[RMDB]
RNA sequence: GGGAACGACUCGAGUAGAGUCGAAAAGCCGUCAGUUAACAAUGGCAUCAGCCCGCUGCCCGCCGAUCAGCUGCCAGGCACACCUCCACCGGUCAACGAUCCUUUGCAGCGACCUGGGUCAGGCACCCAGUUUUGGGAUUUUCGAAUCCCAAAACUGAAAAGAAACAACAACAACAAC
Reactivity to 2A3 in 0.01 (KOAc 150mM, MgCl2 10mM, bicine 150mM(pH8.5), 24C), signal-to-noise 7, nucleotides 027 to 126: g040c010c010g070u080c040a070g030u060u150a110a040c090a160a140u140g040g000c010a070u070c030a080g050c020c000c010g010c030u040g030c010c020c030g030c020c020g030a060u050c030a020g010c010u030g010c010c010a040g040g000c030a020c000a010c040c010u040c000c000a040c010c000g040g040u050c040a060a040c070g040a060u040c030c000u090u100u120g040c030a030g020c000g030a070c010c010u030g030g000g010u050c020a020g030g020c030a030c000c000
Reactivity to DMS in 0.01 (KOAc 150mM, MgCl2 10mM, bicine 150mM(pH8.5), 24C), signal-to-noise 4, nucleotides 027 to 126: g020c020c020g030u010c070a090g020u030u030a090a080c200a100a050u040g000g000c040a100u010c120a150g020c010c020c010g010c050u010g000c020c030c040g000c050c030g010a080u010c090a070g010c010u010g010c030c080a050g020g000c050a100c090a090c060c020u000c020c060a070c060c050g000g010u000c080a120a090c120g030a090u000c030c040u010u020u040g030c030a030g010c040g000a020c060c020u000g000g000g000u000c040a050g010g020c100a080c040c040
The record gives the reactivity of an RNA of 177 nucleotides to 2A3 and DMS. It was measured as part of the RMDB library OK1LIB.